[RMDB]
RNA sequence: GGGAACGACUCGAGUAGAGUCGAAAAUGAGUAAAGUGAUAGGUCGCCUGCGCGAACGUCACGAGAAGUAAUUACCUGAUUGCCUUUCUUAUCAGCAAAAAAAUGCCCUCGACUCAGCAUCGAGGGCUACCCCACUGAUAUUCGUAUCAGUGGGGUAAAAAGAAACAACAACAACAAC
Reactivity to DMS in 0.01 (KOAc 150mM, MgCl2 10mM, bicine 150mM(pH8.5), 24C), signal-to-noise 7, nucleotides 027 to 126: u000g000a120g010u010a060a080a140g010u000g000a030u000a070g040g010u000c020g020c010c100u010g020c250g020c010g010a010a030c020g000u000c010a010c020g010a090g010a100a140g010u010a070a070u000u000a120c090c020u000g010a100u000u000g010c040c090u010u000u000c040u000u000a070u000c080a060g000c120a000a000a020a060a040a060a070u010g010c000c000c000u000c000g000a020c020u000c300a120g020c210a300u000c000g010a010g010g000g010c000
Reactivity to 2A3 in 0.01 (KOAc 150mM, MgCl2 10mM, bicine 150mM(pH8.5), 24C), signal-to-noise 3, nucleotides 027 to 126: u170g010a030g070u130a030a130a010g010u000g020a020u100a230g080g110u020c020g000c050c090u270g030c170g000c020g070a030a020c010g000u010c010a000c010g000a010g010a060a000g020u110a040a080u090u050a060c030c000u010g030a080u020u070g020c010c010u060u100u030c010u050u060a050u080c050a030g120c070a010a030a000a010a010a040a150u120g000c000c010c000u000c000g000a000c010u040c150a030g010c020a060u010c010g010a000g000g000g000c010
Conditions: 150 mM KOAc, 10 mM MgCl2 and 150 mM bicine (pH 8.5), 24 C. The record gives the reactivity of an RNA of 177 nucleotides to DMS and 2A3. The 2A3 profile rests on 3,287 reads. The DMS profile rests on 8,024 reads. 2A3 adducts were read by reverse transcription with SuperScript II with manganese. It was measured as part of the RMDB library OK2TST.